The record gives the reactivity of an RNA of 177 nucleotides to 2A3 and DMS. High DMS reactivity at an A or C suggests that its Watson-Crick edge is free. The RNA was probed in 150 mM KOAc, 10 mM MgCl2 and 150 mM bicine (pH 8.5) at 24 C.
RNA sequence: GGGAACGACUCGAGUAGAGUCGAAAAAAUAGACAGGUCUGAGUGCCUGAACUUGCCUUUUCAUUUUACUUCAUCCUCCAAGGAGUUCAAUCACUUGGCGUGACUUCACUACUUUUAAGCAAAAGAGGUCCGUAAGUUCAUUCGUGAACUUACGGACAAAAGAAACAACAACAACAAC
Reactivity to 2A3 in 0.01 (KOAc 150mM, MgCl2 10mM, bicine 150mM(pH8.5), 24C), signal-to-noise 2, nucleotides 027 to 126: a000a040u190a000g030a000c060a000g010g050u090c080u190g230a050g030u290g040c000c000u000g000a070a020c010u010u080g000c000c000u010u090u000u020c110a150u080u000u050u080a090c020u030u020c010a050u020c000c030u020c030c000a020a030g000g000a050g030u030u030c040a060a150u030c030a030c090u040u040g000g000c030g030u010g030a040c000u060u060c090a010c080u070a100c000u130u020u020u080a130a100g040c060a000a000a130a000g080a020g050
Reactivity to DMS in 0.01 (KOAc 150mM, MgCl2 10mM, bicine 150mM(pH8.5), 24C), signal-to-noise 1, nucleotides 027 to 126: a070a130u080a080g000a300c180a000g000g000u000c020u010g000a180g010u000g000c060c030u020g000a000a070c010u000u000g000c000c040u000u000u010u000c080a210u020u000u000u000a040c060u000u000c140a100u000c040c020u000c040c040a030a090g020g000a140g000u000u020c020a150a110u040c120a110c030u000u000g000g000c010g000u010g000a070c000u060u020c100a170c030u090a030c020u050u000u000u120a080a160g010c050a020a000a060a030g000a080g000